[RMDB]
RNA sequence: GGGAACGACUCGAGUAGAGUCGAAAAAUUAGAUUCGUCUGAUCGUAGUGGUGGUGGCUUGCUUCGGCGAGCCCGGCAGGCCUUCGGGCUUGCUCAGGGGUUCGCUCCUGAGAUUAUCAUCCAACCUCCAAGGAUGGUAAUCCGGCGUCGAUUGUAAGAAUCAUAAUGUGUUCGCACAUUAUGAUUCAAAAGAAACAACAACAACAAC
Reactivity to 2A3 in 0.01 (KOAc 150mM, MgCl2 10mM, bicine 150mM(pH8.5), 24C), signal-to-noise 2, nucleotides 027 to 156: a010u170u150a040g040a060u090u040c050g040u000c110u050g030a070u050c060g050u070a100g020u050g050g010u020g000g020u000g000g020c020u030u030g020c000u040u040c030g020g010c000g010a020g070c020c000c000g020g000c000a000g010g020c000c000u050u060c230g050g010g000c000u010u020g010c000u000c010a010g030g010g000g020u020u030c110g010c060u010c000c000u010g010a050g000a040u010u000a000u010c000a000u000c000c020a050a070c020c060u110c100c090a110a040g000g000a000u000g010g000u000a000a000u000c000c000g000g000c020g030u030c020g020a040u040u120g050u110a070a090
Reactivity to DMS in 0.01 (KOAc 150mM, MgCl2 10mM, bicine 150mM(pH8.5), 24C), signal-to-noise 1, nucleotides 027 to 156: a080u010u010a050g000a040u010u010c100g020u000c020u010g040a030u010c020g010u010a060g030u000g010g030u000g020g010u000g020g030c020u000u000g050c000u000u010c070g020g050c010g010a050g020c020c000c010g000g060c020a000g000g000c000c000u000u020c300g050g040g030c020u010u000g030c010u000c000a040g030g000g070g040u000u000c040g030c000u000c050c010u010g000a060g010a010u000u000a010u000c000a000u000c010c020a040a080c060c080u000c300c040a140a300g010g020a000u020g010g010u000a010a010u000c010c020g020g010c070g030u000c000g000a170u000u020g000u010a110a230